[RMDB]
RNA sequence: GGGAACGACUCGAGUAGAGUCGAAAAUUCAACAGAUUAACCUUCAGAAACAACGUCAAUCUCUGGAGGAAAAGAAAGUUCAACUUCAAAAUCAGAUUGACUCAAUCACUCUUCUCCCAAUUAGUGAAUUCCUUCAAUGGUUCGCCAUUGAAGGAAUAAAAGAAACAACAACAACAAC
Reactivity to 2A3 in 0.01 (KOAc 150mM, MgCl2 10mM, bicine 150mM(pH8.5), 24C), signal-to-noise 1, nucleotides 027 to 126: u060u030c010a050a060c020a030g150a040u100u110a040a040c000c000u010u010c000a010g040a070a180a040c050a050a050c090g030u020c040a070a010u010c050u000c000u020g000g020a010g040g000a000a070a000a000g010a050a060a000g020u090u130c040a100a070c040u070u030c010a070a080a050a170u080c010a040g010a090u010u070g010a030c000u000c140a020a140u010c000a000c010u020c000u040u030c030u000c020c000c000a030a060u030u020a020g010u020g090a050
Reactivity to DMS in 0.01 (KOAc 150mM, MgCl2 10mM, bicine 150mM(pH8.5), 24C), signal-to-noise 2, nucleotides 027 to 126: u020u010c060a100a100c080a160g000a030u000u020a040a210c000c010u000u000c010a010g050a030a060a120c180a100a110c190g010u000c100a090a090u000c010u000c010u010g000g000a030g000g040a080a060a080a040g000a030a100a060g010u000u010c160a050a040c030u000u000c030a090a060a070a030u000c070a040g010a170u000u000g000a000c100u010c100a100a060u000c050a020c050u000c040u000u000c040u000c000c010c010a080a050u000u000a040g010u010g000a070